[RMDB]
Source: RMDB library RSTRND, as collected in RNAgym.
The record gives the reactivity of an RNA of 207 nucleotides to DMS and 2A3.
2A3 is a SHAPE reagent: it acylates the 2'-hydroxyl of flexible nucleotides of all four kinds.
For 2A3, 10,884 sequencing reads were counted.
In probing experiments dimethyl sulfate is read out at A N1 and C N3, which are open when not base-paired.
Conditions: 150 mM KOAc, 10 mM MgCl2 and 150 mM bicine (pH 8.5), 24 C.
RNA sequence: GGGAACGACUCGAGUAGAGUCGAAAAGAGGGAUCUACCGAUGGGUUCGGUCGCGGGACUCGUCGGGACACCAACCGCGACUGGGAUCGUCAUCCUGGCUAGUUCGCGUGAUCAGGAGAUCCGAGUAGAGGCAUAGCGAACUACGCACGGAGAAGCCGACCUAAAAUAUGUUCGCAUAUUUUAGGUCAAAAGAAACAACAACAACAAC
Reactivity to DMS in 0.01 (KOAc 150mM, MgCl2 10mM, bicine 150mM(pH8.5), 24C), signal-to-noise 3, nucleotides 027 to 156: g010a100g020g020g000a120u000c040u000a070c010c000g020a040u010g010g000g010u000u000c040g000g020u000c050g030c070g020g000g000a050c020u000c010g050u000c020g010g020g010a080c080a090c050c080a120a120c040c000g000c010g010a050c030u000g010g010g010a040u000c040g030u000c040a170u000c000c000u010g010g020c020u000a080g010u000u000c010g000c050g000u000g000a060u000c050a110g000g010a180g010a070u000c020c000g020a230g040u000a050g010a110g000g000c030a100u010a090g000c000g000a050a070c020u000a100c070g000c020a100c040g010g010a100g010a100a120g020c030c090
Reactivity to 2A3 in 0.01 (KOAc 150mM, MgCl2 10mM, bicine 150mM(pH8.5), 24C), signal-to-noise 7, nucleotides 027 to 156: g130a020g040g070g020a100u040c050u140a060c020c010g010a020u020g010g010g000u020u010c060g050g000u000c000g000c000g010g000g010a010c010u010c020g010u000c010g000g010g010a000c010a020c010c030a090a050c030c010g000c000g000a000c000u020g020g010g010a030u030c020g030u030c040a040u010c010c000u010g020g000c010u030a050g010u020u000c000g000c010g020u020g010a070u040c020a010g040g010a040g010a010u010c010c020g010a010g010u300a020g020a020g010g010c060a100u160a040g000c010g010a010a000c010u050a040c070g040c040a050c050g050g040a080g040a090a020g070c080c080